[RMDB]
RNA sequence: GGGAACGACUCGAGUAGAGUCGAAAAGAUAUGGAGGCUUGGAUUUACUCCGAGUCGCAUUCGGAAACGAAUGUCGACGUUUGACGAGUUGUCAGCCUCCUAAGUCAAACUAGGGUUCGCCCUAGAAGUGUCACGGUUAGUUCGCUAACCGUGACACAAAAGAAACAACAACAACAAC
Reactivity to 2A3 in 0.01 (KOAc 150mM, MgCl2 10mM, bicine 150mM(pH8.5), 24C), signal-to-noise 1, nucleotides 027 to 126: g010a000u020a000u100g030g000a020g000g000c070u130u240g210g060a070u300u260u210a010c000u030c010c030g000a020g010u050c000g000c000a000u060u030c030g130g000a000a080a030c040g000a000a020u060g150u300c070g000a030c010g060u110u240u300g180a090c120g050a020g010u050u060g010u080c000a010g010c030c030u040c000c000u000a000a000g020u000c060a040a070a220c000u000a000g040g000g000u060u030c300g160c000c060c000u020a010g030a070a060
Reactivity to DMS in 0.01 (KOAc 150mM, MgCl2 10mM, bicine 150mM(pH8.5), 24C), signal-to-noise 1, nucleotides 027 to 126: g000a060u010a300u020g010g000a030g000g000c000u000u010g020g000a000u030u000u020a000c020u000c010c040g020a090g020u000c000g000c000a000u000u000c010g030g000a050a150a260c000g040a000a000u000g000u030c010g030a030c020g050u010u030u020g000a300c300g000a010g000u000u000g030u000c000a090g000c000c000u000c000c000u010a000a160g000u020c020a100a080a240c010u000a020g000g000g020u000u010c300g040c010c000c000u000a000g000a040a110